[RMDB]
RNA sequence: GGGAACGACUCGAGUAGAGUCGAAAACUCUUGCACAGAAUCACCUUUCUAUAAUAACCAGUGCAAGAAGGGUUAUUAUACCAUUUAAUGUGCCGAGGCCACGCGGAGUACGAUCGAGGGUGCAGCAAAAACGUGAAGUACUUCGGUACUUCACGAAGCACCAAACAAGGUUCGCCUUGUUUGGUGCAAAAGAAACAACAACAACAAC
Reactivity to 2A3 in 0.01 (KOAc 150mM, MgCl2 10mM, bicine 150mM(pH8.5), 24C), signal-to-noise 2, nucleotides 027 to 156: c000u000c000u000u020g000c020a000c020a050g140a120a140u120c030a080c050c010u070u250u110c140u050a010u000a020a000u010a000a000c000c000a000g010u000g030c010a010a000g020a010a020g020g000g020u000u000a000u000u030a000u030a070c030c020a100u030u130u210a160a110u180g020u060g010c010c040g050a020g000g030c020c020a010c040g040c020g010g040a010g010u100a040c060g050a130u050c020g010a030g040g000g000u010g010c000a020g000c000a060a030a000a000a000c020g000u000g000a000a000g020u010a020c000u040u040c130g020g010u000a000c000u000u000c000a000c000g000a050a000